RNA sequence: GGGAACGACUCGAGUAGAGUCGAAAAGAUAUGGAUUGUAGGGAGGCUCGUGUCGGAAACGACACCGGCCGAGGAUCUACGUCCUAAGUCAAAGUCACCGUGUCGAGUUCGCUCGACACGGUGACAACCACCUACUAUACUUCGGUAUAGUAGGUGGAAAAGAAACAACAACAACAAC
Reactivity to 2A3 in 0.01 (KOAc 150mM, MgCl2 10mM, bicine 150mM(pH8.5), 24C), signal-to-noise 1, nucleotides 027 to 126: g020a010u060a030u100g000g020a020u190u300g010u020a010g000g000g000a050g000g000c000u030c030g010u020g000u020c010g000g010a100a020a020c020g000a000c010a030c010c030g000g000c020c020g000a010g000g000a000u000c000u000a000c000g000u000c000c000u010a080a010g040u010c060a200a070a000g020u000c000a000c000c030g130u040g000u020c010g000a010g030u070u260c300g030c250u000c030g000a000c000a010c000g000g000u000g000a000c000a000a010
Reactivity to DMS in 0.01 (KOAc 150mM, MgCl2 10mM, bicine 150mM(pH8.5), 24C), signal-to-noise 1, nucleotides 027 to 126: g010a000u000a180u000g010g000a010u010u010g030u000a000g010g030g000a000g020g010c010u010c300g010u000g000u000c010g010g000a010a020a030c000g010a010c000a000c010c080g000g010c010c000g010a090g010g000a090u000c000u000a000c020g000u000c010c000u000a030a140g000u000c030a120a060a120g010u000c000a010c000c000g000u000g060u000c000g030a040g050u000u010c290g020c030u000c000g040a000c010a000c010g000g010u000g020a010c010a020a050